[RMDB]
RNA sequence: GGGAACGACUCGAGUAGAGUCGAAAAAUUACGGGCGGCGCAGGUGGAGCUGCGAUCGCUCCGCCCAUCGCGUGCUCUCUCGGUGGCCCAGACGCUGCAAACGGACAGGCGGGCCACCUGCAACGAACCGAUAGUAGGAAUUCGUUCCUACUAUCGGAAAAGAAACAACAACAACAAC
Reactivity to DMS in 0.01 (KOAc 150mM, MgCl2 10mM, bicine 150mM(pH8.5), 24C), signal-to-noise 6, nucleotides 027 to 126: a070u010u000a100c160g010g010g000c000g030g020c010g030c300a170g000g020u010g000g010a040g000c000u000g020c200g000a060u000c180g010c000u000c000c000g020c010c010c050a060u010c050g000c020g020u010g000c010u000c010u000c050u000c060g030g010u000g000g010c010c010c010a100g030a120c060g000c000u000g000c080a070a080a210c300g000g000a200c020a040g000g020c070g000g010g000c000c000a010c000c000u010g010c130a040a070c150g010a090a160
Reactivity to 2A3 in 0.01 (KOAc 150mM, MgCl2 10mM, bicine 150mM(pH8.5), 24C), signal-to-noise 4, nucleotides 027 to 126: a000u160u120a110c120g010g000g000c050g030g040c000g010c020a010g000g010u020g020g020a010g010c020u040g040c060g080a060u140c090g000c000u000c000c000g010c000c010c000a120u170c050g010c030g050u060g010c000u000c000u000c000u010c020g000g010u000g000g000c010c020c020a080g050a120c120g080c110u030g000c030a130a240a260c090g080g110a100c020a010g000g030c000g000g000g000c000c010a000c000c000u000g020c010a060a060c020g090a050a020
This 177-nucleotide RNA was probed chemically with DMS and 2A3. Reactivities are given for positions 27 through 126. It was measured as part of the RMDB library M2PK90. DMS adducts were read by reverse transcription with MarathonRT.